[RMDB]
RNA sequence: GGGAACGACUCGAGUAGAGUCGAAAAGGGCGAUCCUUCGGGAUCGCCCAAAUAAAGGCAGUGGAGUGCAAGAAGCACAGUCAAUAACUGACGCCACGACAAAAAGUACAUGGUUCGCCAUGUACAACUACGACAUAAUCUUCGGAUUAUGUCGUAGAAAAGAAACAACAACAACAAC
Reactivity to 2A3 in 0.01 (KOAc 150mM, MgCl2 10mM, bicine 150mM(pH8.5), 24C), signal-to-noise 2, nucleotides 027 to 126: g040g000g010c080g000a030u100c220c220u300u300c300g050g010g000a000u010c000g000c010c000c000a000a000a000u000a000a000a000g080g010c080a020g010u000g080g100a120g040u020g020c060a110a160g130a200a000g170c010a010c000a030g020u010c000a000a070u120a150a030c080u060g000a010c060g060c100c000a010c020g000a010c050a000a110a040a030a070g050u000a000c000a000u010g000g010u030u060c130g000c050c000a020u000g000u000a000c000a010a020
Reactivity to DMS in 0.01 (KOAc 150mM, MgCl2 10mM, bicine 150mM(pH8.5), 24C), signal-to-noise 2, nucleotides 027 to 126: g000g020g040c030g040a010u000c010c000u000u020c130g040g010g030a030u000c000g010c000c000c000a000a010a020u010a080a110a110g000g000c130a070g000u000g030g000a080g000u000g000c030a160a170g010a140a230g000c020a030c030a170g030u000c010a030a100u020a080a110c210u030g000a010c080g020c020c010a030c060g020a150c300a060a010a040a110a080g010u010a000c000a030u000g000g000u000u000c260g020c000c000a000u000g010u000a010c000a040a120